The data come from the RNA Mapping Database (RMDB), library OK2TST. An RNA of 177 nucleotides, treated with 2A3 and DMS and read out base by base. The DMS profile rests on 21,136 reads. Reactivities are given for positions 27 through 126.

[RMDB]
RNA sequence: GGGAACGACUCGAGUAGAGUCGAAAAAAUGGCCGCACUUAUUCUAACAUCACAUUACAGACCACUAAUCUGUUUCCUCGUAAUGGUGAUUUAGGCACUCAGUAUGUCUAUUCAGCAUCUAAUGAGAGAUGUAAUAACAGUUCGCUGUUAUUACAUCAAAAGAAACAACAACAACAAC
Reactivity to 2A3 in 0.01 (KOAc 150mM, MgCl2 10mM, bicine 150mM(pH8.5), 24C), signal-to-noise 9, nucleotides 027 to 126: a000a010u100g050g000c040c020g050c020a030c050u080u080a070u190u090c030u040a050a040c020a070u060c030a020c010a070u030u140a030c010a030g050a040c010c020a060c150u090a070a080u050c030u040g020u030u060u040c010c000u020c020g020u030a000a040u040g150g060u010g020a030u030u020u030a010g000g000c000a010c010u180c030a080g040u200a170u070g000u000c000u010a030u030u030c010a040g060c000a030u010c050u150a150a060u120g010a020g010a010
Reactivity to DMS in 0.01 (KOAc 150mM, MgCl2 10mM, bicine 150mM(pH8.5), 24C), signal-to-noise 9, nucleotides 027 to 126: a080a060u010g000g000c030c030g010c060a070c080u000u000a070u010u000c040u000a070a080c110a040u010c050a060c070a050u000u000a040c050a070g010a070c110c040a060c130u010a080a130u000c080u000g000u000u000u000c050c020u000c070g020u000a050a010u000g000g010u000g000a030u000u000u000a010g010g010c060a030c050u010c180a110g010u010a090u000g010u000c010u000a030u000u000c030a030g000c020a020u000c100u000a070a060u010g000a070g010a190